[RMDB]
RNA sequence: GGGAACGACUCGAGUAGAGUCGAAAACGCAACUCAACGUGCUGCCGAUCUACGGCGGAUCGUCGUAUGCCGUGCAACUGGCCGGAUUGAGACGCGGCGCGCAGGUGGUGGUUGGCACCCCCGGUCGAGCCGCGGUGACUUUCGAGUCACCGCGGCUAAAAGAAACAACAACAACAAC
Reactivity to DMS in 0.01 (KOAc 150mM, MgCl2 10mM, bicine 150mM(pH8.5), 24C), signal-to-noise 2, nucleotides 027 to 126: c060g030c100a090a050c080u020c030a090a140c050g010u000g000c020u000g010c020c000g000a250u000c120u000a070c040g030g010c020g010g020a100u020c040g020u000c050g030u000a070u020g010c030c000g000u010g010c060a130a140c150u000g020g000c000c040g000g030a110u010u010g020a060g010a300c300g000c020g000g010c040g030c010g020c030a120g000g010u000g000g030u010g010g000u010u000g010g000c140a110c060c010c010c030c010g010g000u000c140g010
Reactivity to 2A3 in 0.01 (KOAc 150mM, MgCl2 10mM, bicine 150mM(pH8.5), 24C), signal-to-noise 1, nucleotides 027 to 126: c060g020c010a030a070c000u050c100a040a000c040g070u060g050c010u010g000c000c000g000a070u020c000u120a030c010g030g000c140g090g040a210u220c020g030u000c000g060u060a060u190g090c030c000g050u130g000c080a180a240c140u080g100g030c030c010g040g020a040u040u150g040a060g010a020c020g020c020g020g000c000g000c030g030c090a030g030g000u030g020g040u070g030g010u120u130g050g060c020a030c000c010c000c000c020g000g180u120c040g090